This 177-nucleotide RNA was probed chemically with DMS. For DMS the reverse transcriptase was MarathonRT. For DMS, 1,103 sequencing reads were counted. High DMS reactivity at an A or C suggests that its Watson-Crick edge is free. Conditions: 150 mM KOAc, 10 mM MgCl2 and 150 mM bicine (pH 8.5), 24 C.
RNA sequence: GGGAACGACUCGAGUAGAGUCGAAAACAGGUUGUGUUUGAUGCAGAGAGCGAGCCUAGACUGCAGUGGGGGCAUGGCUGCUUGUCCAUUGUUUAUGACGAAACUGAUACUCAGACCACAUACCAUGCUUGGGCCUGUAAUUCGUUACAGGCCCAAGAAAAGAAACAACAACAACAAC
Reactivity to DMS in 0.01 (KOAc 150mM, MgCl2 10mM, bicine 150mM(pH8.5), 24C), signal-to-noise 1, nucleotides 027 to 126: c060a110g020g020u000u010g020u000g020u010u030u000g000a110u000g010c060a030g010a070g010a150g000c100g000a100g000c020c050u000a110g020a100c120u010g000c090a030g000u000g030g010g010g000g020c050a020u000g000g000c100u000g030c050u010u000g000u010c010c070a080u010u000g040u000u000u000a100u010g000a050c040g000a070a070a130c030u000g010a090u000a060c090u000c010a050g000a080c040c050a040c060a100u000a100c050c040a080u010g010